[RMDB]
RNA sequence: GGGAACGACUCGAGUAGAGUCGAAAAGAUAGCCUUACUUGGGACAAGACAUUUCCAAAUCCCUUGGGUGGUCCAUGCAGACUGGCCCUUAAGUUCUUCGCACUUGUCAAACUGCUUCACCGUAGGACUAAUAUACGAUGUUCGCAUCGUAUAUUAGAAAAGAAACAACAACAACAAC
Reactivity to DMS in 0.01 (KOAc 150mM, MgCl2 10mM, bicine 150mM(pH8.5), 24C), signal-to-noise 7, nucleotides 027 to 126: g020a110u020a120g000c030c010u000u030a050c070u000u010g010g000g000a060c100a060a100g000a110c140a100u010u000u000c010c020a050a090a120u010c010c010c010u030u010g010g000g030u010g000g000u010c040c080a100u010g000c130a050g000a070c070u000g010g010c030c050c030u000u010a030a050g000u000u000c040u000u000c050g010c040a060c050u000u010g010u000c080a050a080a120c040u000g000c010u000u000c060a080c050c040g000u010a050g010g020a260
Reactivity to 2A3 in 0.01 (KOAc 150mM, MgCl2 10mM, bicine 150mM(pH8.5), 24C), signal-to-noise 9, nucleotides 027 to 126: g060a060u170a050g030c010c010u060u100a090c040u060u110g040g010g030a030c030a060a040g070a030c040a160u080u100u020c030c000a030a060a060u040c010c010c000u030u040g060g000g010u050g020g020u020c030c020a110u180g040c030a030g020a090c030u070g090g010c020c010c000u030u050a080a030g010u060u030c010u040u040c050g010c040a050c040u040u040g030u050c020a060a080a080c040u040g020c000u050u050c040a050c060c020g050u070a050g010g070a020
An RNA of 177 nucleotides, treated with DMS and 2A3 and read out base by base. For 2A3, 44,957 sequencing reads were counted. For DMS the reverse transcriptase was MarathonRT. For DMS, 22,011 sequencing reads were counted. 2A3 adducts were read by reverse transcription with SuperScript II with manganese. Source: RMDB library OK1LIB, as collected in RNAgym.